Annotation
Conditions: 150 mM KOAc, 10 mM MgCl2 and 150 mM bicine (pH 8.5), 24 C. This 177-nucleotide RNA was probed chemically with 2A3 and DMS. For DMS the reverse transcriptase was MarathonRT. For DMS, 3,214 sequencing reads were counted. The data come from the RNA Mapping Database (RMDB), library OK2TRN.
[RMDB]
RNA sequence: GGGAACGACUCGAGUAGAGUCGAAAACUGCAUGCAGCAGCACUGACGUCCUCUCCUGCAUCCUACACCUCCUGGGCAAGGGCACGCUGAGACGCCAUGACGACCGGCCCCAGGUGCUGUCCUAUGCCACGUAACGAGUUUUCGAACUCGUUACGUGAAAAGAAACAACAACAACAAC
Reactivity to 2A3 in 0.01 (KOAc 150mM, MgCl2 10mM, bicine 150mM(pH8.5), 24C), signal-to-noise 2, nucleotides 027 to 126: c020u040g010c020a020u070g040c050a060g000c020a000g040c000a030c080u080g070a050c030g080u020c000c020u010c030u020c000c000u020g060c000a030u030c020c000u030a030c070a050c030c000u100c010c070u070g000g010g040c040a040a020g060g000g000c040a000c030g040c040u040g040a020g040a080c060g020c000c000a050u090g100a060c060g030a030c040c030g000g040c000c010c000c030a020g010g040u000g010c000u000g010u010c000c000u140a160u150g030c000
Reactivity to DMS in 0.01 (KOAc 150mM, MgCl2 10mM, bicine 150mM(pH8.5), 24C), signal-to-noise 3, nucleotides 027 to 126: c040u000g000c070a050u010g020c110a100g010c070a050g000c060a060c060u000g010a110c110g010u000c020c010u000c060u000c030c030u010g000c070a090u000c020c020u010a080c110a120c040c040u010c020c040u000g000g010g020c040a050a040g010g010g000c030a020c070g010c020u020g010a150g000a100c130g020c020c010a040u000g020a100c160g010a070c140c060g000g000c040c020c020c050a110g020g010u000g010c140u000g000u000c020c010u000a090u010g000c040